[RMDB]
RNA sequence: GGGAACGACUCGAGUAGAGUCGAAAAUUCCAUUUGAGUAUCCUGAAAACGGGCUUUUCAGCAUGGAACGUACAUAUUAAAUAGUAGGAGUCCAUAGUGGCCCGUAUAGCAGGCAUUAACAUUCCUGAAAACGUGAAAAGGUUCGCCUUUUCACGAACGUAUAUGGUUACUUCGGUAACCAUAUACGAAAAGAAACAACAACAACAAC
Reactivity to 2A3 in 0.01 (KOAc 150mM, MgCl2 10mM, bicine 150mM(pH8.5), 24C), signal-to-noise 4, nucleotides 027 to 156: u080u020c010c000a030u100u060u100g020a030g030u080a080u130c010c010u020g040a050a020a060a030c010g020g000g000c030u200u200u150u240c130a070g020c020a030u010g000g030a080a010c010g100u070a010c050a040u180a060u130u300a140a180a170u130a050g020u020a020g020g190a200g050u000c000c000a010u020a040g060u070g050g000c030c000c000g030u010a010u010a020g000c010a000g010g040c010a000u020u020a010a050c010a070u080u060c010c020u040g050a120a050a010a040c010g000u000g000a000a000a000a000g030g000u030u040c130g080c000c000u000u010u000u000c000a000c000g000a010a000
Reactivity to DMS in 0.01 (KOAc 150mM, MgCl2 10mM, bicine 150mM(pH8.5), 24C), signal-to-noise 2, nucleotides 027 to 156: u000u000c010c000a150u000u020u010g010a130g010u010a080u000c020c000u000g000a040a110a190a080c010g020g020g040c030u020u000u000u000c150a230g000c080a030u010g010g020a040a080c040g020u000a080c050a090u000a170u010u000a090a110a300u000a110g000u000a050g020g010a130g000u010c010c010a080u000a140g010u000g010g010c000c010c000g000u010a040u000a130g020c070a030g000g030c090a040u000u000a070a150c100a220u000u010c020c020u000g000a100a070a130a160c010g000u000g000a010a000a030a020g000g010u000u000c300g030c010c000u010u000u000u000c030a000c000g020a010a020